[RMDB]
RNA sequence: GGGAACGACUCGAGUAGAGUCGAAAAGGGGCCAUGUGAAACGGACUCGUCCAGCACAAUGCUUUGCCCGGGCUUCAACCAGGUAUUGUCUGCGCCGGCAACCGGUUUGACAACCAGUUGCAGAUGGUAAUACGGGUCGAUUCGUCGACCCGUAUUAAAAAGAAACAACAACAACAAC
Reactivity to 2A3 in 0.01 (KOAc 150mM, MgCl2 10mM, bicine 150mM(pH8.5), 24C), signal-to-noise 3, nucleotides 027 to 126: g050g000g000g000c000c030a080u080g070u030g090a240a090a020c090g060g000a050c020u020c100g100u020c000c020a020g050c020a010c010a040a130u110g030c020u050u050u110g020c000c010c060g000g050g000c020u080u060c020a030a080c030c000a020g000g040u070a080u100u080g040u010c030u050g010c050g010c020c000g050g000c030a030a050c020c000g000g040u010u070u110g080a030c040a020a040c000c010a000g010u000u020g000c010a020g040a140u110g100g040
Reactivity to DMS in 0.01 (KOAc 150mM, MgCl2 10mM, bicine 150mM(pH8.5), 24C), signal-to-noise 4, nucleotides 027 to 126: g010g000g000g020c010c050a100u020g000u030g010a040a080a150c150g010g000a030c060u050c140g000u010c010c010a090g030c070a060c080a080a080u010g010c030u000u010u020g000c010c010c020g010g010g000c100u000u020c070a070a100c070c040a080g000g010u020a060u030u020g000u010c030u010g000c100g020c030c040g000g010c000a030a020c000c040g000g000u000u000u000g040a130c250a100a040c000c020a050g010u010u000g010c010a050g010a100u030g000g000
Structure probing data (2A3 and DMS) for a 177-nucleotide construct. For 2A3 the reverse transcriptase was SuperScript II with manganese. The reactions ran in a buffer of 150 mM KOAc, 10 mM MgCl2 and 150 mM bicine (pH 8.5), at 24 C. Source: RMDB library OK1LIB, as collected in RNAgym. DMS adducts were read by reverse transcription with MarathonRT.